[RMDB]
RNA sequence: GGGAACGACUCGAGUAGAGUCGAAAAUUUAUGGUACUGCUACUAUUGGUGUAUGUAAGUACACUGAUAUUGAUGUUAAUUCAGCUUUGAAUAUAUGUUUUGACAUACGCGAUAAUUGUUCAUUGGACGUAGCAGAAUUGUUCGCAAUUCUGCUACGAAAAGAAACAACAACAACAAC
Reactivity to DMS in 0.01 (KOAc 150mM, MgCl2 10mM, bicine 150mM(pH8.5), 24C), signal-to-noise 1, nucleotides 027 to 126: u010u000u010a020u020g010g020u010a060c060u010g000c060u000a130c160u010a050u000u000g010g010u000g010u020a000u000g020u020a050a110g010u000a000c000a000c000u000g000a000u000a010u000u000g000a110u000g010u010u010a090a100u000u010c040a040g000c070u000u000u020g030a160a040u000a060u030a040u010g020u000u000u010u010g000a000c020a100u000a030c050g000c020g000a020u000a070a180u000u000g000u000u000c000a180u010u000g010g020a300
Reactivity to 2A3 in 0.01 (KOAc 150mM, MgCl2 10mM, bicine 150mM(pH8.5), 24C), signal-to-noise 2, nucleotides 027 to 126: u000u020u010a050u010g120g000u110a050c030u030g020c010u020a000c020u000a040u020u040g060g000u040g000u020a000u000g100u080a130a040g000u000a000c000a000c010u000g010a000u020a000u050u100g140a140u060g080u080u220a150a090u180u010c030a010g060c110u050u090u070g130a090a000u090a000u040a040u170g080u030u020u030u020g010a000c000a020u050a000c040g000c000g060a020u050a110a040u120u050g040u020u020c000a070u070u070g060g000a020
The record gives the reactivity of an RNA of 177 nucleotides to DMS and 2A3. For 2A3 the reverse transcriptase was SuperScript II with manganese. 2A3 is a SHAPE reagent: it acylates the 2'-hydroxyl of flexible nucleotides of all four kinds. For DMS, 1,314 sequencing reads were counted.